[RMDB]
RNA sequence: GGGAACGACUCGAGUAGAGUCGAAAAUAUUUGCUGCUGGCUGAGUUGACUGGCCAAAACUUUGUUGGAUGCUCAACGGGCGGUUCAACUUAAAUCCUAAUCACAUACGCAGCCAAAGAAUCAAGUACCCACGUAUAAUGUUCGCAUUAUACGUGGGAAAAGAAACAACAACAACAAC
Reactivity to DMS in 0.01 (KOAc 150mM, MgCl2 10mM, bicine 150mM(pH8.5), 24C), signal-to-noise 4, nucleotides 027 to 126: u040a060u020u020u000g030c020u000g000c030u010g000g010c100u010g000a050g030u000u000g020a110c260u000g000g020c040c030a060a060a060a080c220u020u030u010g020u000u000g010g000a050u010g000c040u030c060a050a100c150g020g020g010c000g010g030u010u020c010a000a020c030u000u010a040a080a080u020c040c010u010a080a140u040c100a050c140a140u000a090c120g010c000a010g020c010c140a010a040a120g000a100a140u000c020a000a010g000u020a110
Reactivity to 2A3 in 0.01 (KOAc 150mM, MgCl2 10mM, bicine 150mM(pH8.5), 24C), signal-to-noise 5, nucleotides 027 to 126: u220a060u030u050u060g030c010u010g000c010u040g070g000c030u060g020a000g040u020u020g030a040c010u040g180g090c010c010a050a050a090a090c150u140u130u190g000u010u030g080g050a190u270g060c050u060c150a030a030c030g000g040g010c000g030g000u150u130c030a000a000c000u020u020a060a040a070u100c000c010u050a090a040u130c030a040c060a140u210a060c060g000c000a000g010c000c010a090a050a010g080a030a090u100c040a030a020g020u020a030
An RNA of 177 nucleotides, treated with DMS and 2A3 and read out base by base. The reactions ran in a buffer of 150 mM KOAc, 10 mM MgCl2 and 150 mM bicine (pH 8.5), at 24 C. The 2A3 profile rests on 3,677 reads.